[RMDB]
RNA sequence: GGGAACGACUCGAGUAGAGUCGAAAAGAUAUGGAAGGAUCAUGACAUGAACAGUUUCGGAAACGAAAUUUGUUCAACAGCAUGGCCUUCCUAAGUCAAAAGUACCUUCGGUUCGCCGAAGGUACAACCAAUUACUUGGCUUCGGCCAAGUAAUUGGAAAAGAAACAACAACAACAAC
Reactivity to 2A3 in 0.01 (KOAc 150mM, MgCl2 10mM, bicine 150mM(pH8.5), 24C), signal-to-noise 2, nucleotides 027 to 126: g000a020u030a010u060g000g000a030a020g090g020a260u120c010a010u000g050a070c080a290u300g000a010a010c020a010g000u010u000u000c010g010g000a060a020a020c010g020a020a020a030u300u300u150g000u000u040c040a010a080c040a010g020c000a000u010g010g010c000c030u010u000c000c000u000a020a000g010u000c000a020a000a000a270g000u000a010c000c000u000u000c030g060g140u020u100c300g060c120c000g010a010a000g020g000u000a010c000a000a010
Reactivity to DMS in 0.01 (KOAc 150mM, MgCl2 10mM, bicine 150mM(pH8.5), 24C), signal-to-noise 2, nucleotides 027 to 126: g000a020u000a100u000g000g010a030a000g000g000a170u000c000a030u000g030a070c170a180u010g000a000a020c010a020g020u000u010u010c010g020g010a020a020a060c000g020a000a000a050u000u010u000g010u000u000c020a130a060c210a210g000c030a000u000g010g000c010c000u000u000c000c000u020a030a050g000u000c010a130a160a170a120g020u000a000c000c000u010u000c000g010g000u000u020c300g020c010c000g020a000a030g010g000u000a000c000a070a110